[RMDB]
RNA sequence: GGGAACGACUCGAGUAGAGUCGAAAAUGAGUACAGGAGCCUGCUGGCGGAGAAGCUGCUGGGCAAGACGGAUUACGAGUGCGACCGCGAGAUCCGCACCCUCGAACUGCUCAAGCUGCGCUUCGGCAUCACCUUCCUCAUUCGUGAGGAAGGUGAUAAAAGAAACAACAACAACAAC
Reactivity to DMS in 0.01 (KOAc 150mM, MgCl2 10mM, bicine 150mM(pH8.5), 24C), signal-to-noise 2, nucleotides 027 to 126: u000g010a140g010u000a040c070a110g000g000a140g030c100c010u020g000c060u000g020g010c010g090g000a040g000a060a040g030c010u000g020c000u010g020g010g000c030a000a040g000a300c040g000g000a070u010u010a160c180g000a030g000u000g030c000g000a040c020c060g000c220g000a200g010a040u010c090c070g050c020a050c030c010c010u000c050g000a060a280c080u010g000c000u000c000a030a090g010c040u000g000c060g000c050u000u000c020g020g010c130
Reactivity to 2A3 in 0.01 (KOAc 150mM, MgCl2 10mM, bicine 150mM(pH8.5), 24C), signal-to-noise 1, nucleotides 027 to 126: u090g030a040g050u160a100c040a060g070g000a010g100c030c070u020g150c120u010g080g030c070g000g030a070g020a110a080g010c000u030g000c040u030g000g040g000c000a000a000g050a000c020g030g040a060u100u170a130c080g020a040g040u000g010c040g000a030c050c040g180c060g110a100g000a090u070c100c040g000c010a030c000c000c070u060c000g050a070a040c030u010g000c000u000c030a070a050g010c020u040g000c040g000c050u020u010c000g010g000c000